Source: RMDB library RNAMAK, as collected in RNAgym.
Structure probing data (2A3) for a 207-nucleotide construct.
The RNA was probed in 150 mM KOAc, 10 mM MgCl2 and 150 mM bicine (pH 8.5) at 24 C.
The 2A3 profile rests on 999 reads.
RNA sequence: GGGAACGACUCGAGUAGAGUCGAAAACCACCCCUUCGGGGGUGGAAAGCGUACUACUCACGCUUUGAUCUACGGGCAUGCCAGCAGUCCCAAAUAGGACUGCGGUAAUUUGCCGGUAGGGAGCGUGAGUAUCGCAAAAGUGGGGGUUCGCCCCCACGGGUGAGUUAGGAUUCGUCCUAACUCACCCAAAAGAAACAACAACAACAAC
Reactivity to 2A3 in 0.01 (KOAc 150mM, MgCl2 10mM, bicine 150mM(pH8.5), 24C), signal-to-noise 2, nucleotides 027 to 156: c000c000a030c030c000c020c020u040u140c300g090g000g000g000g030u040g000g000a090a020a000g010c010g040u120a140c040u000a000c000u020c000a000c020g000c070u300u060u060g160a170u070c000u000a000c130g120g000g000c000a000u030g010c010c030a090g000c010a010g010u060c000c040c060a110a300a110u260a070g000g000a000c010u010g020c010g000g000u020a050a070u020u110u210g000c000c010g040g000u000a000g000g030g000a000g000c030g010u010g010a000g010u000a000u040c000g000c000a030a080a210a020g000u000g000g000g000g000g020u020u100c090g070c050c000c000c000c030a000c040